This 177-nucleotide RNA was probed chemically with 2A3 and DMS. The data come from the RNA Mapping Database (RMDB), library OK1LIB. Values cover nucleotides 27 to 126.
[RMDB]
RNA sequence: GGGAACGACUCGAGUAGAGUCGAAAAGACUUGAUGCAGUGUCGUCUGGCAGGUGUCAGGUUGAAGCCGUGGGCUGAGUGGUCAAGUUCAUGCACGAUGUGAACGCGUGACCAGAUGAUCACGCAUGGCGUGUUGCAACGUUCGCGUUGUAAUACGCAAAAGAAACAACAACAACAAC
Reactivity to 2A3 in 0.01 (KOAc 150mM, MgCl2 10mM, bicine 150mM(pH8.5), 24C), signal-to-noise 2, nucleotides 027 to 126: g020a010c000u020u060g020a000u000g000c060a140g200u000g000u010c030g050u000c090u080g000g000c000a010g020g020u010g000u010c000a000g010g010u010u010g030a030a000g020c020c010g010u020g000g000g000c010u000g020a030g060u060g000g000u010c010a030a020g000u000u010c000a000u020g000c010a010c100g070a090u100g020u000g040a030a000c010g000c060g080u010g000a070c000c000a000g000a030u010g000a000u010c000a000c010g000c010a020u030g040
Reactivity to DMS in 0.01 (KOAc 150mM, MgCl2 10mM, bicine 150mM(pH8.5), 24C), signal-to-noise 2, nucleotides 027 to 126: g010a230c030u010u000g000a010u000g000c000a230g000u050g030u010c000g000u120c300u100g000g000c000a010g000g000u000g010u000c010a020g000g000u000u000g000a060a050g020c060c010g010u000g000g000g000c030u000g000a080g010u020g010g000u000c010a050a070g000u010u010c010a000u000g000c060a160c130g000a090u010g010u000g000a010a020c060g010c080g000u000g000a030c010c020a040g010a090u010g000a030u010c000a020c000g010c020a100u020g010